[RMDB]
RNA sequence: GGGAACGACUCGAGUAGAGUCGAAAACAAACAAACCAACCACACUCAAACAAAACAAAAAUUGAAGAAACCUCAUCUCUUCAAUGGAGAUGCAGAGGAUGCAUUCAUCCGUGUUAAACAAACAAAACAUGACGUAACUCUUCGGAGUUACGUCAUGAAAAGAAACAACAACAACAAC
Reactivity to DMS in 0.01 (KOAc 150mM, MgCl2 10mM, bicine 150mM(pH8.5), 24C), signal-to-noise 1, nucleotides 027 to 126: c070a000a080a030c130a130a010a100c060c040a210a080c040c050a010c060a040c040u000c050a050a040a070c130a050a120a010a040c110a020a080a000a040a000u010u000g000a010a000g000a150a030a050c080c000u000c140a020u000c020u000c000u010u000c180a020a050u050g000g050a030g030a040u000g000c130a030g050a050g030g000a040u000g000c000a000u000u000c050a010u000c000c010g000u010g000u060u020a110a120a060c180a050a020a120c130a040a110a020a070
Reactivity to 2A3 in 0.01 (KOAc 150mM, MgCl2 10mM, bicine 150mM(pH8.5), 24C), signal-to-noise 4, nucleotides 027 to 126: c040a010a120a000c020a040a100a010c030c000a020a020c020c020a070c020a040c070u090c070a040a050a030c030a030a110a120a050c070a040a100a090a040a100u070u050g020a020a010g010a060a090a060c040c050u110c020a070u050c030u000c000u160u080c040a030a080u190g000g000a020g000a010u030g010c020a020g040a030g160g080a020u030g000c020a040u060u140c000a030u000c030c000g030u030g050u120u100a070a090a050c140a050a040a000c040a040a060a010a000

An RNA of 177 nucleotides, treated with DMS and 2A3 and read out base by base. The reactions ran in a buffer of 150 mM KOAc, 10 mM MgCl2 and 150 mM bicine (pH 8.5), at 24 C. It was measured as part of the RMDB library OK1LIB. Values cover nucleotides 27 to 126. The DMS profile rests on 1,504 reads. For 2A3, 2,760 sequencing reads were counted.